[RMDB]
RNA sequence: GGGAACGACUCGAGUAGAGUCGAAAAGAUAUGGAUGUAUGUAGUAGUAUGAAUGCGUUGAAAUCGGAAACGAUGGAGCAUCAUACGAAACAUACAUCCUAAGUCAAAACGUAGGUUCGCCUACGAACAACAAUCAUGUCUUCGGACAUGAUUGUUGAAAAGAAACAACAACAACAAC
Reactivity to 2A3 in 0.01 (KOAc 150mM, MgCl2 10mM, bicine 150mM(pH8.5), 24C), signal-to-noise 3, nucleotides 027 to 126: g020a020u060a000u180g010g010a000u000g000u010a000u010g000u000a040g020u000a010g010u010a020u010g070a300a110u010g020c070g230u300u050g070a040a040a000u000c020g010g000a110a030a020c030g000a010u010g000g010a010g000c000a000u000c000a000u010a000c000g000a000a000a010c000a000u010a000c000a000u000c000c000u000a000a000g000u000c010a010a020a080a160c010g000u010a020g000g050u050u050c300g120c060c010u000a000c000g050a010a020
Reactivity to DMS in 0.01 (KOAc 150mM, MgCl2 10mM, bicine 150mM(pH8.5), 24C), signal-to-noise 3, nucleotides 027 to 126: g010a060u000a300u020g010g000a010u000g020u000a000u000g000u010a070g010u000a160g010u000a000u000g000a090a050u000g010c000g020u000u000g000a070a120a020u000c000g000g000a120a110a200c000g010a020u000g000g000a160g020c000a020u000c010a010u000a000c000g000a140a140a090c000a000u000a000c000a000u010c000c000u000a000a050g010u000c020a060a040a100a180c020g010u000a000g010g010u010u020c300g000c000c000u000a010c000g010a060a150
The record gives the reactivity of an RNA of 177 nucleotides to 2A3 and DMS. The 2A3 profile rests on 8,870 reads. It was measured as part of the RMDB library TTRDEL. Conditions: 150 mM KOAc, 10 mM MgCl2 and 150 mM bicine (pH 8.5), 24 C. 2A3 adducts were read by reverse transcription with SuperScript II with manganese.